[RMDB]
RNA sequence: GGGAACGACUCGAGUAGAGUCGAAAAUGAAAACCGCAACUUCACCGGGAAGAAGAUGCAAAUCAUAGAUGACGAUGUACCCAGCUUCCACGCCCAUGGCUACCAGGAGAAGGUGUCGUCUGUGCGGGUGCAGAGUGGCACGUAAGUGCGUUGCCAACGUAAUGGAUUUAUUCGUAAAUCCAUUACGAAAAGAAACAACAACAACAAC
Reactivity to 2A3 in 0.01 (KOAc 150mM, MgCl2 10mM, bicine 150mM(pH8.5), 24C), signal-to-noise 6, nucleotides 027 to 156: u140g020a020a010a010a040c040c030g030c030a040a040c020u040u030c020a030c070c090g060g030g030a020a040g020a010a010g020a050u060g020c040a040a070a060u110c040a020u090a110g130a120u090g050a050c060g050a050u050g020u110a050c020c010c030a040g020c000u090u010c030c010a060c050g020c000c020c010a060u080g030g000c030u090a070c050c040a040g040g080a070g090a070a050g060g000u030g010u030c000g000u000c030u030g030u030g010c020g020g000g000u020g020c020a000g030a020g100u100g010g020c020a000c020g020u040a120a090g050u080g140c030g050u100u110g000c000c010a020a020
Reactivity to DMS in 0.01 (KOAc 150mM, MgCl2 10mM, bicine 150mM(pH8.5), 24C), signal-to-noise 2, nucleotides 027 to 156: u020g000a090a030a070a140c000c000g070c010a120a110c060u020u000c030a110c030c030g050g010g010a140a100g010a130a080g000a070u000g020c010a040a140a080u000c030a110u000a140g010a090u000g020a060c030g010a120u000g010u010a060c010c030c020a110g000c050u000u000c010c000a130c220g050c000c020c020a100u030g020g020c010u010a070c030c030a090g000g000a110g000a020a090g060g000u000g020u000c000g030u000c010u000g000u000g000c100g010g000g020u000g010c060a090g000a090g010u020g010g000c000a000c020g020u010a040a100g000u000g000c070g000u000u000g000c010c040a030a160